[RMDB]
RNA sequence: GGGAACGACUCGAGUAGAGUCGAAAAUCUGCAGUCCCUGGGGGCCACGCUGCGUGAGCUGAGCAGUGCCUUCCAGAGCCCUGUGCUGUGCAUCAACCAGGUGACAGAGGCCAUGGAGGAGCAGGGCUGGUGUGCUCCUAUUCGUAGGAGCACACCAAAAAGAAACAACAACAACAAC
Reactivity to DMS in 0.01 (KOAc 150mM, MgCl2 10mM, bicine 150mM(pH8.5), 24C), signal-to-noise 1, nucleotides 027 to 126: u010c080u040g000c030a120g010u010c010c020c010u000g020g000g010g000g000c100c030a040c070g010c070u000g000c080g000u010g020a190g010c050u010g000a160g020c040a080g050u000g020c020c010u000u000c000c010a030g010a300g020c000c000c060u020g010u000g000c040u000g000u020g020c220a060u030c170a100a180c100c020a080g010g000u000g000a060c090a010g010a230g000g000c020c090a070u020g020g000a020g000g020a150g020c000a030g020g000g020c190